[RMDB]
RNA sequence: GGGAACGACUCGAGUAGAGUCGAAAAGCUAGACAACCUUAACUCUUCAGAGUUGAAGAAACUAGUGAAAGUGACAGGGUACAUACUGAGCACAAAAUAGACCAUAAAGAAUGAUUACACAGUCGUACAAAGGUUUUAACUUCGGUUAAAACCUUUGAAAAGAAACAACAACAACAAC
Reactivity to 2A3 in 0.01 (KOAc 150mM, MgCl2 10mM, bicine 150mM(pH8.5), 24C), signal-to-noise 1, nucleotides 027 to 126: g000c000u020a000g010a120c070a070a120c050c010u020u020a010a000c010u010c030u300u200c150a140g010a030g040u000u070g010a000a000g020a020a040a030c020u000a000g030u000g120a070a050a050g020u030g030a020c000a030g070g030g040u070a060c010a040u190a020c020u060g010a020g090c080a000c030a000a030a010a100u120a010g100a000c000c000a020u140a040a090a020g100a000a160u010g010a120u000u230a030c050a000c030a020g100u080c030g160u050a030
Reactivity to DMS in 0.01 (KOAc 150mM, MgCl2 10mM, bicine 150mM(pH8.5), 24C), signal-to-noise 3, nucleotides 027 to 126: g000c010u010a010g010a120c180a110a210c150c030u000u000a030a010c020u010c030u010u010c240a160g000a060g000u000u010g010a010a020g010a150a110a110c020u000a010g010u000g010a040a080a120g010u000g010a070c060a010g000g000g010u020a070c200a040u020a090c040u000g000a090g000c020a010c060a040a050a050a150u020a080g000a110c070c010a090u030a060a080a160g010a080a030u010g000a060u020u010a040c080a100c160a060g000u010c100g010u010a120

Source: RMDB library OK2TST, as collected in RNAgym. The record gives the reactivity of an RNA of 177 nucleotides to 2A3 and DMS. High 2A3 reactivity points to a flexible backbone, as in loops and unpaired stretches. For DMS, 1,797 sequencing reads were counted.